[RMDB]
RNA sequence: GGGAACGACUCGAGUAGAGUCGAAAAGAAGACGAUCAGAUACCGUCGUAGUCUUAACCAUAAACUAUGCCGACUAGGGAUCGGGCGAUGUUAUUAUUUUGACUCGCUCGGCACCUUACGAGAAAUCAGUUUGCCUCAACUUCGGUUGAGGCAAACUAAAAGAAACAACAACAACAAC
Reactivity to 2A3 in 0.01 (KOAc 150mM, MgCl2 10mM, bicine 150mM(pH8.5), 24C), signal-to-noise 1, nucleotides 027 to 126: g030a000a000g140a000c200g000a060u130c040a040g030a080u180a160c000c130g010u000c000g000u000a010g000u000c000u040u180a060a060c000c130a020u140a110a000a000c040u060a020u300g040c050c000g030a060c000u000a000g000g000g000a030u000c000g000g000g000c000g030a000u300g020u000u000a050u000u050a150u090u280u250u120g000a000c000u000c000g000c000u000c000g000g000c000a050c000c000u000u030a000c030g060a050g060a110a010a070u170c020
Chemical mapping of a 177-nucleotide RNA with 2A3. Values are in units of 0.01, from 0 to 300, in steps of 10. Source: RMDB library RFM100, as collected in RNAgym. The 2A3 profile rests on 401 reads. For 2A3 the reverse transcriptase was SuperScript II with manganese.